[RMDB]
RNA sequence: GGGAACGACUCGAGUAGAGUCGAAAAUUGUCAAGCUGCAUGGAUAUGCGGGGUUGCGCUCCAAGAUCAAGGAGUGUAGGGGCAUACGUGCAGUCCCUUUGGAGUUCAGGCAGGCCGACCCGGUUGAGUUUGGGGAGCUUGUCGCUGGUCGAGGACUGAACCAUAUAGUGUUCGCACUAUAUGGUUCAAAAGAAACAACAACAACAAC
Reactivity to 2A3 in 0.01 (KOAc 150mM, MgCl2 10mM, bicine 150mM(pH8.5), 24C), signal-to-noise 5, nucleotides 027 to 156: u170u070g100u060c060a020a040g020c010u010g010c020a000u020g080g150a120u030a020u080g030c040g020g060g030g050u100u070g000c000g000c010u000c010c010a090a090g090a300u250c180a160a090g020g000a010g010u010g000u030a030g030g060g100g000c000a010u000a020c020g000u010g000c030a010g010u050c000c000c010u070u050u110g090g020a070g000u080u090c040a030g040g020c000a000g010g010c010c030g060a120c010c010c010g030g020u100u190g100a210g080u100u220u190g010g000g000g000a020g010c010u000u020g030u030c050g010c020u030g020g020u040c030g050a090g010g050a030c040u040
Reactivity to DMS in 0.01 (KOAc 150mM, MgCl2 10mM, bicine 150mM(pH8.5), 24C), signal-to-noise 1, nucleotides 027 to 156: u020u000g030u000c120a200a180g010c000u010g060c020a060u000g010g010a170u000a050u020g030c120g120g020g000g030u010u000g010c080g060c030u000c010c010a120a080g040a190u010c240a190a250g010g020a040g040u000g050u000a040g090g030g040g040c020a020u000a020c020g000u000g050c000a090g020u000c000c010c010u000u020u000g030g010a080g000u000u010c070a150g000g010c000a060g010g000c010c000g010a190c030c000c020g000g040u000u000g000a200g010u000u000u010g010g000g000g000a090g000c080u010u000g020u000c000g030c030u000g040g000u000c040g010a100g030g000a170c120u000